About this RNA:
Structure probing data (2A3 and DMS) for a 207-nucleotide construct. DMS (dimethyl sulfate) methylates the pairing face of unpaired adenines and cytosines. DMS adducts were read by reverse transcription with MarathonRT.

RNA sequence: GGGAACGACUCGAGUAGAGUCGAAAAGGCUGCGUAUCACUCUAGGGUACGUGAUAGUGCGAUAUAAGAAGCACUGGUACAUGCCGGCAGGGACAGUUAAGAGAUGGCCGCAGUCUCGUUUCCCUGCAAAAGGAGUUCUCGUUCGCGAGAACUCCAAGAUCACGAAUUGGUUCGCCAAUUCGUGAUCAAAAGAAACAACAACAACAAC
Reactivity to 2A3 in 0.01 (KOAc 150mM, MgCl2 10mM, bicine 150mM(pH8.5), 24C), signal-to-noise 4, nucleotides 027 to 156: g000g010c000u000g000c000g000u070a200u240c000a010c030u040c030u100a060g100g010g010u030a020c060g020u040g020a040u070a040g000u000g020c030g040a050u040a040u090a300a070g150a150a010g000c000a000c000u010g010g010u070a030c040a030u130g020c020c010g060g010c060a080g010g050g140a070c070a110g050u120u180a130a040g010a020g020a140u020g020g010c000c010g000c010a010g000u000c000u000c010g000u010u010u000c000c000c010u020g010c030a040a040a030a030g000g020a000g000u000u010c000u000c000g020u080u070c220g000c010g130a000g000a000a000c000u000c000c010a000a000
Reactivity to DMS in 0.01 (KOAc 150mM, MgCl2 10mM, bicine 150mM(pH8.5), 24C), signal-to-noise 2, nucleotides 027 to 156: g020g040c000u020g010c020g050u010a090u010c010a050c040u000c000u020a200g020g030g030u010a040c030g000u010g000a070u000a020g020u010g060c030g010a230u030a230u030a240a110g010a200a300g000c000a020c010u010g020g000u010a060c100a090u030g010c040c010g010g000c050a070g020g010g070a070c140a130g000u000u010a120a050g000a180g000a150u000g030g040c260c070g020c050a080g040u000c010u000c030g050u000u010u000c000c000c050u010g040c110a040a160a120a100g000g010a050g030u000u010c010u000c010g030u000u020c170g010c000g020a030g000a010a010c000u000c000c000a000a180

The DMS profile rests on 1,977 reads.